[RMDB]
RNA sequence: GGGAACGACUCGAGUAGAGUCGAAAACAUGGGGAACUACAUCUGUGUCGCGAGUUCGAUUCUCGCCAGGGCCUGGUCCUGUAGCUCAGUUGGUAGAGCAAGCUGUUCCCCGGACACUUGUCGUCAGAAAAGUUGCCCCCGUUCGCGGGGGCAACAACCUCAUAUACGUGUUCGCACGUAUAUGAGGAAAAGAAACAACAACAACAAC
Reactivity to 2A3 in 0.01 (KOAc 150mM, MgCl2 10mM, bicine 150mM(pH8.5), 24C), signal-to-noise 1, nucleotides 027 to 156: c050a160u200g000g010g000g020a000a000c030u170a040c100a130u090c040u040g090u030g030u130c000g000c000g000a020g020u010u010c010g000a010u010u000c000u000c000g010c000c000a000g000g000g040c040c280u240g030g060u040c020c020u000g030u020a020g000c000u000c020a050g000u150u100g110g150u240a010g000a000g000c010a010a020g020c020u000g010u020u000c030c000c010c000g000g000a000c020a030c030u030u240g010u070c020g040u070c090a060g110a060a100a010a010g030u000u000g000c050c000c000c010c000g010u000u030c030g000c040g080g060g050g000g000c000a000a000c000a010a000
Reactivity to DMS in 0.01 (KOAc 150mM, MgCl2 10mM, bicine 150mM(pH8.5), 24C), signal-to-noise 1, nucleotides 027 to 156: c090a100u040g010g000g000g040a050a050c030u000a010c110a090u000c140u030g020u000g010u000c030g000c000g000a040g020u010u020c030g030a300u000u000c000u000c000g000c000c030a060g040g000g000c050c090u000g060g000u000c030c000u000g000u000a040g000c010u000c000a130g020u020u000g040g000u010a040g000a090g030c020a140a120g020c080u000g010u000u010c000c000c000c030g040g020a040c000a050c160u000u000g010u000c010g010u000c000a120g010a140a040a100a180g110u000u000g010c000c000c000c000c000g030u000u000c250g010c050g000g040g000g030g000c000a000a000c000a010a110